An RNA of 177 nucleotides, treated with 2A3 and DMS and read out base by base. 2A3 is a SHAPE reagent: it acylates the 2'-hydroxyl of flexible nucleotides of all four kinds. The RNA was probed in 150 mM KOAc, 10 mM MgCl2 and 150 mM bicine (pH 8.5) at 24 C. For DMS the reverse transcriptase was MarathonRT.
[RMDB]
RNA sequence: GGGAACGACUCGAGUAGAGUCGAAAAAAGAGCUGGCCUGGCGUCGUCCGGCUCCCUCGACCGCACCGGAGCGCUAGAAAAGGUCCUCGGACUUUCUUCUAUCUCCGAAGCCGGUUUGAGGCCCGGCCUAGGAUAGAUAGUUCGCUAUCUAUCCUAGAAAAGAAACAACAACAACAAC
Reactivity to 2A3 in 0.01 (KOAc 150mM, MgCl2 10mM, bicine 150mM(pH8.5), 24C), signal-to-noise 3, nucleotides 027 to 126: a000a000g020a000g020c000u010g010g000c010c040u050g060g040c040g050u300c040g050u020c050c010g010g010c000u020c000c000c000u010c000g020a030c020c010g000c030a040c140c050g010g020a000g020c060g000c050u000a000g010a010a000a010a010g030g020u030c020c010u080c150g100g000a010c000u020u030u050c040u030u000c030u100a300u300c000u020c000c000g000a000a000g010c040c000g010g040u030u060u280g000a010g000g000c010c000c000g010g010c010
Reactivity to DMS in 0.01 (KOAc 150mM, MgCl2 10mM, bicine 150mM(pH8.5), 24C), signal-to-noise 4, nucleotides 027 to 126: a080a050g000a020g020c020u000g000g010c090c060u000g010g000c060g010u000c090g000u000c010c000g020g010c020u000c010c000c000u000c010g000a020c010c010g000c060a240c180c020g000g000a020g000c050g000c010u000a010g000a020a010a020a010g000g000u000c000c020u010c300g020g010a010c010u000u000u010c180u000u000c000u000a010u000c000u010c010c010g000a140a130g010c230c040g020g000u000u000u010g010a020g020g000c070c000c010g020g020c110